[RMDB]
RNA sequence: GGGAACGACUCGAGUAGAGUCGAAAAAUAUAGGGCCAUGUAAUGGGUGCAAAGAUAGCAAACUAGAAAAACUAGACAUUUCUUGUGUGGAAUAGCCUUAGUUUGUGUAUCCCCACAGGAAUUCCUGGAACAUUGUAUUUUUCGAAAUACAAUGUUCAAAAGAAACAACAACAACAAC
Reactivity to DMS in 0.01 (KOAc 150mM, MgCl2 10mM, bicine 150mM(pH8.5), 24C), signal-to-noise 7, nucleotides 027 to 126: a090u000a100u000a120g010g000g010c030c040a030u010g010u010a090a080u010g010g000g010u000g010c060a070a070a090g000a060u000a070g010c030a040a030a080c020u000a060g010a080a080a080a110a130c080u000a060g000a100c100a070u000u010u000c050u010u000g010u000g000u000g020g000a050a030u000a090g010c080c040u000u000a060g010u000u010u000g010u000g010u000a110u000c010c000c010c040a100c090a040g000g000a060a110u000u000c010c010u000g010
Reactivity to 2A3 in 0.01 (KOAc 150mM, MgCl2 10mM, bicine 150mM(pH8.5), 24C), signal-to-noise 6, nucleotides 027 to 126: a000u170a010u060a090g040g020g030c020c010a030u070g030u140a140a130u200g050g030g000u080g030c040a090a070a020g060a050u040a020g040c020a030a050a060c030u030a020g070a110a160a010a000a000c030u030a020g040a100c020a070u070u150u060c040u070u100g040u010g030u040g040g040a090a060u050a070g010c000c020u080u060a050g040u060u130u060g020u010g030u010a020u020c000c000c010c000a000c010a010g020g020a030a080u050u030c010c010u040g100